[RMDB]
This 177-nucleotide RNA was probed chemically with DMS and 2A3. The RNA was probed in 150 mM KOAc, 10 mM MgCl2 and 150 mM bicine (pH 8.5) at 24 C. DMS (dimethyl sulfate) methylates the pairing face of unpaired adenines and cytosines. For 2A3 the reverse transcriptase was SuperScript II with manganese. For DMS the reverse transcriptase was MarathonRT. The data come from the RNA Mapping Database (RMDB), library TTRDES.
RNA sequence: GGGAACGACUCGAGUAGAGUCGAAAAAAAAGAUAUGGAAGAGAGGGAGGCACCAUACCCUAUGAAGAGCUUCGGAAACGAAGCUUGGAGGGUACAUUUGCCUUUGAUCUCUCUUCCUAAGUCAAAACCACUAAUAAAUGUUCGCAUUUAUUAGUGGAAAAGAAACAACAACAACAAC
Reactivity to DMS in 0.01 (KOAc 150mM, MgCl2 10mM, bicine 150mM(pH8.5), 24C), signal-to-noise 5, nucleotides 027 to 126: a040a040a080a060g020a050u010a300u000g000g010a020a010g010a010g000a030g010g000g000a000g000g020c010a050c300c300a240u000a010c000c000c000u000a190u030g010a170a110g000a010g010c000u000u000c000g010g010a120a090a110c000g010a020a000g000c010u000u000g010g010a010g020g000g010u000a000c150a110u000u000u000g010c010c000u000u010u000g000a030u020c000u000c000u000c000u000u000c010c010u000a010a080g000u000c030a070a060a130a160
Reactivity to 2A3 in 0.01 (KOAc 150mM, MgCl2 10mM, bicine 150mM(pH8.5), 24C), signal-to-noise 3, nucleotides 027 to 126: a000a000a010a080g070a040u110a050u140g010g010a010a000g010a000g000a010g000g020g000a000g000g010c000a000c030c000a030u060a030c000c010c000u250a300u140g020a020a010g010a000g000c010u000u000c000g010g010a060a060a000c010g000a010a010g000c010u000u010g000g000a000g020g000g000u010a020c010a070u170u190u090g010c010c000u200u200u050g050a060u000c000u010c000u000c000u000u010c010c000u000a020a010g020u010c020a010a010a040a160